[RMDB]
Annotation: The record gives the reactivity of an RNA of 177 nucleotides to DMS.
RNA sequence: GGGAACGACUCGAGUAGAGUCGAAAAAUGACUCCCCAGAAGGCUUUAGAUGUAUGGGAGUUUUGGGUGCCAACUGAGAUUAUUUGGGUGUUGUCUAAUGUUCUGCUCAGAGCCUUGGGACUUUGUCCGAAAAAGUCUGAUUCGUCAGACUUUUUCGAAAAGAAACAACAACAACAAC
Reactivity to DMS in 0.01 (KOAc 150mM, MgCl2 10mM, bicine 150mM(pH8.5), 24C), signal-to-noise 3, nucleotides 027 to 126: a070u010g010a090c050u010c020c020c020c170a200g010a100a120g010g010c050u000u010u000a070g020a110u000g010u010a070u010g010g010g010a070g000u000u000u000u000g010g010g010u000g020c050c020a050a090c060u000g010a040g000a100u010u000a080u010u010u010g000g010g010u000g010u000u010g010u000c060u000a040a070u010g010u000u000c010u000g020c030u000c040a060g010a100g010c030c020u000u010g020g000g020a150c060u000u000u000g000u010c090